[RMDB]
RNA sequence: GGGAACGACUCGAGUAGAGUCGAAAAGAACUCACCAGCAAAUGUUUACGACAAGAUUCGACAUUUGCAAAUUACGUAGCGAUCUUCCAGAAUCUUGUCGAAACGUUCCCUAUCGCUACGCCCUAAAUAUAUCUUACUAAUUCGUUAGUAAGAUAUAAAAAGAAACAACAACAACAAC
Reactivity to DMS in 0.01 (KOAc 150mM, MgCl2 10mM, bicine 150mM(pH8.5), 24C), signal-to-noise 8, nucleotides 027 to 126: g000a110a110c090u000c040a130c090c080a130g000c050a040a050a040u000g000u000u000u000a280c040g000a010c000a010a010g010a020u000u000c020g010a130c190a050u000u010u010g010c090a050a070a080u010u020a050c030g020u000a010g000c000g010a010u000c140u010u000c180c190a110g000a020a010u000c000u000u000g010u000c010g010a010a040a170c040g000u000u000c010c000c000u000a020u000c000g010c000u000a010c010g000c020c030c020u000a050a070a110
Reactivity to 2A3 in 0.01 (KOAc 150mM, MgCl2 10mM, bicine 150mM(pH8.5), 24C), signal-to-noise 6, nucleotides 027 to 126: g030a050a030c030u020c060a070c030c020a020g060c050a040a070a090u140g030u140u210u160a090c020g000a000c000a010a000g000a010u010u030c030g030a030c100a150u150u150u180g030c020a030a020a040u120u080a020c010g000u010a010g030c000g000a010u020c060u180u060c180c050a050g000a020a010u010c000u000u010g010u000c010g050a060a040a000c010g000u010u010c000c000c000u000a010u020c040g000c000u000a010c000g010c010c000c000u100a080a120a000
Overview
This 177-nucleotide RNA was probed chemically with DMS and 2A3. DMS (dimethyl sulfate) methylates the pairing face of unpaired adenines and cytosines. The RNA was probed in 150 mM KOAc, 10 mM MgCl2 and 150 mM bicine (pH 8.5) at 24 C. The DMS profile rests on 12,113 reads. For DMS the reverse transcriptase was MarathonRT. It was measured as part of the RMDB library M2PK90.